[RMDB]
RNA sequence: GGGAACGACUCGAGUAGAGUCGAAAAAGAAUGCACCACAGCGUAAAAUCAUCUGAUUGGGUGAGUUGGUCGCAUCGCCAUUUGACGAACGAACGCCAAGCCUAAGCCGUCUUUGUGCAUUAAGUGGAAAAGGAGCCCCAGUUCGCUGGGGCUCCAACUGACAUAGAUUCUUCGGAAUCUAUGUCAGAAAAGAAACAACAACAACAAC
Reactivity to DMS in 0.01 (KOAc 150mM, MgCl2 10mM, bicine 150mM(pH8.5), 24C), signal-to-noise 1, nucleotides 027 to 156: a140g000a110a010u000g010c000a050c010c120a110c080a020g030c050g010u000a050a100a090a050u020c010a070u010c050u030g020a210u000u000g030g000g050u000g000a180g030u020u010g010g030u000c030g000c020a110u010c020g000c010c010a280u000u010u010g020a050c020g020a070a060c050g000a060a010c000g000c040c000a030a240g060c020c040u000a060a180g020c050c030g010u010c070u000u000u000g020u000g000c000a040u010u000a030a070g040u010g010g010a050a040a100a160g020g000a070g000c030c020c000c010a080g040u010u000c160g050c050u000g000g000g030g020c000u000c000c000a000a040